[RMDB]
This 177-nucleotide RNA was probed chemically with DMS. It was measured as part of the RMDB library TTRINS. Conditions: 150 mM KOAc, 10 mM MgCl2 and 150 mM bicine (pH 8.5), 24 C. For DMS the reverse transcriptase was MarathonRT.

RNA sequence: GGGAACGACUCGAGUAGAGUCGAAAAGAUAUGGACUCUGAACUACAGCCGAUAGGGUCGUUGAAAUAGUAGCGUCGGAAACGACGCUACUAUGGAGACCCUGGUAGCUGCUGCAGAGUCCUAAGUCCAAGUCUUUAUCCUUCGGGAUAAAGACUUGAAAAGAAACAACAACAACAAC
Reactivity to DMS in 0.01 (KOAc 150mM, MgCl2 10mM, bicine 150mM(pH8.5), 24C), signal-to-noise 1, nucleotides 027 to 126: g010a100u010a300u030g010g020a020c010u010c000u020g010a130a180c080u010a100c010a000g030c030c040g050a300u030a030g000g000g030u000c000g040u030u020g010a190a110a010u000a000g010u000a010g000c010g100u010c000g020g000a080a130a280c000g020a040c010g010c000u000a000c000u000a000u000g000g000a170g000a020c010c000c000u000g010g040u010a300g000c040u030g010c120u010g000c040a020g000a030g010u000c000c010u010a000a050g000u000c070